Structure probing data (2A3) for a 207-nucleotide construct. It was measured as part of the RMDB library OK3TST. The reactions ran in a buffer of 150 mM KOAc, 10 mM MgCl2 and 150 mM bicine (pH 8.5), at 24 C.
RNA sequence: GGGAACGACUCGAGUAGAGUCGAAAAGCACGCAGCACCCAGGACCUCCGCUGUAGUGAGCGUGGCCCGUGUUGGGCAGGGGGCGCUGCUGCCACCAUCAUCCGGGUCCCAAGCAGGCCUGCCAGGGGUGAGGGGGAGCCGUGGGCGCUGAGGCCUGCGGUGUAAAAACCUUCGGGUUUUUACACCGAAAAGAAACAACAACAACAAC
Reactivity to 2A3 in 0.01 (KOAc 150mM, MgCl2 10mM, bicine 150mM(pH8.5), 24C), signal-to-noise 2, nucleotides 027 to 156: g030c010a000c130g040c000a000g010c010a020c020c020c010a010g000g020a020c020c020u060c020c050g050c050u100g110u180a190g060u070g230a130g030c060g040u070g010g010c010c010c020g080u150g220u080u060g040g040g030c070a070g050g020g020g020g050c020g030c100u140g000c040u040g000c010c000a050c040c020a080u160c020a020u050c010c030g100g090g080u020c000c020c000a000a040g010c020a020g040g030c000c020u040g010c040c000a080g040g060g000g070u080g070a190g010g000g010g010g020a030g000c050c020g170u060g020g010g000c070g020c030u010g030a030g000g040c010c000u040g030